[RMDB]
RNA sequence: GGGAACGACUCGAGUAGAGUCGAAAAACAUAUUACGAUAUGAUUCAGAUGGUGUCUUACUGGUUCGUACCAAGGGACAUAAUGGUUUCUUGUUUCCAACCAAAGAACAAGUGGCCAGCCUGAAUAAAAAACUGACUGCCGUUCGCGGCAGUCAGAAGAUACUUGCUUGCUUCGGCAAGCAAGUAUCAAAAGAAACAACAACAACAAC
Reactivity to 2A3 in 0.01 (KOAc 150mM, MgCl2 10mM, bicine 150mM(pH8.5), 24C), signal-to-noise 2, nucleotides 027 to 156: a000c040a000u180a020u170u190a100c100g060a030u040a010u130g050a040u030u000c030a020g100a150u090g070g030u030g030u020c020u040u080a120c020u030g000g030u070u220c150g110u250a020c000c010a010a020g020g000g010a010c000a000u120a040a130u100g020g000u010u000u000c000u010u010g030u010u050u030c010c110a090a110c020c000a280a250a040g050a060a000c000a030a000g050u030g060g010c000c000a000g020c030c000u000g020a000a000u170a090a030a000a000a000a020c000u010g000a000c000u000g000c000c000g000u040u030c250g020c010g130g020c000a000g000u010c000a000g000a000a000
This 207-nucleotide RNA was probed chemically with 2A3. The reactions ran in a buffer of 150 mM KOAc, 10 mM MgCl2 and 150 mM bicine (pH 8.5), at 24 C. For 2A3, 783 sequencing reads were counted.